This 177-nucleotide RNA was probed chemically with DMS and 2A3.
Source: RMDB library OK2TST, as collected in RNAgym.
For 2A3 the reverse transcriptase was SuperScript II with manganese.

[RMDB]
RNA sequence: GGGAACGACUCGAGUAGAGUCGAAAAAGAGGCAAUAAUUGGGUCAGCCAUUGGGAUUCGUCCACCAUAUACAGUGGCGAGAUCAGCGACCAUAGUUUAUCCAGCGGCUGCUCGAUAAACGCUGCGACACGCAGCGUACCUUCGGGUACGCUGCGUGAAAAGAAACAACAACAACAAC
Reactivity to DMS in 0.01 (KOAc 150mM, MgCl2 10mM, bicine 150mM(pH8.5), 24C), signal-to-noise 2, nucleotides 027 to 126: a070g020a170g000g010c030a070a100u000a100a080u000u010g010g000g010u000c020a030g000c000c040a060u000u000g000g010g010a080u020u000c000g020u030c000c020a040c000c060a100u010a180u020a130c230a100g020u000g000g000c020g010a030g010a070u000c060a090g000c070g000a080c120c100a110u010a060g000u000u000u020a080u010c000c040a050g030c040g000g010c090u000g000c000u020c100g000a010u010a030a020a080c160g020c050u010g010c070g020a220
Reactivity to 2A3 in 0.01 (KOAc 150mM, MgCl2 10mM, bicine 150mM(pH8.5), 24C), signal-to-noise 2, nucleotides 027 to 126: a000g140a100g030g040c050a060a080u110a150a070u120u090g050g000g000u120c030a040g010c020c030a020u050u080g040g030g020a050u030u050c010g070u110c030c010a000c010c040a050u100a030u040a230c100a040g000u020g020g000c000g000a040g010a040u040c030a000g060c000g040a030c040c000a040u080a020g000u030u080u040a080u030c020c020a000g000c000g090g000c040u080g010c000u020c020g000a000u010a020a070a000c040g000c020u030g020c020g060a030